Description
Chemical mapping of a 207-nucleotide RNA with 2A3. For 2A3 the reverse transcriptase was SuperScript II with manganese. It was measured as part of the RMDB library M2RFPK. Reactivities are given for positions 27 through 156.

RNA sequence: GGGAACGACUCGAGUAGAGUCGAAAAUGACGUUAAACUGCUGACUCAUACAUACUGACACCGGUUGCUUAACAGGCUGUGUGGGACAAUAGAAUAACAAGGCUGUCAAUUUGAGCUUGACGGCUGCAAAACCUGCAGUACUUCGGUACUGCAGGAAGGAAGGAUACAGCUUCGGCUGUAUCCUUCCAAAAGAAACAACAACAACAAC
Reactivity to 2A3 in 0.01 (KOAc 150mM, MgCl2 10mM, bicine 150mM(pH8.5), 24C), signal-to-noise 1, nucleotides 027 to 156: u060g010a000c060g000u040u030a030a130a020c000u010g000c000u000g030a010c010u010c030a000u060a010c000a000u140a000c050u030g090a040c020a030c070c080g100g000u120u150g060c050u050u050a120a020c010a010g030g010c010u000g010u030g010u000g000g000g020a010c000a010a010u020a020g040a050a000u010a010a000c050a040a010g010g000c030u030g000u010c000a000a000u160u110u270g070a030g080c030u000u000g000a000c000g000g000c020u050g020c010a010a010a030a070c020c000u010g050c010a010g000u000a000c000u010u060c160g070g000u000a000c000u010g000c010a000g000g000a000a000